An RNA of 177 nucleotides, treated with 2A3 and read out base by base.

[RMDB]
RNA sequence: GGGAACGACUCGAGUAGAGUCGAAAAAGACGUUCAUCUGCGUGAGCUUCCGAUCUCAGUAUUGUUUGGAAGGAUCAUUUGAUUAACGCGGUUUGAACAGUUUUUUGGAGCUUUUGAUUUCAAAUGUCUCCUACGUACCCUUCGGGGUACGUAGGAGAAAAGAAACAACAACAACAAC
Reactivity to 2A3 in 0.01 (KOAc 150mM, MgCl2 10mM, bicine 150mM(pH8.5), 24C), signal-to-noise 1, nucleotides 027 to 126: a000g000a000c010g000u000u000c000a050u010c000u000g030c030g010u020g000a010g030c000u000u000c000c000g020a020u030c020u000c130a240g060u300a230u140u300g020u070u050u050g010g010a010a000g010g070a050u000c030a040u050u100u260g030a060u020u110a010a010c000g000c050g000g050u080u060u030g000a000a000c010a050g000u000u000u000u000u000u000g040g030a030g010c000u000u030u070u120g180a180u040u050u140c040a000a080a070u160g010u000

For 2A3, 499 sequencing reads were counted.
Values cover nucleotides 27 to 126.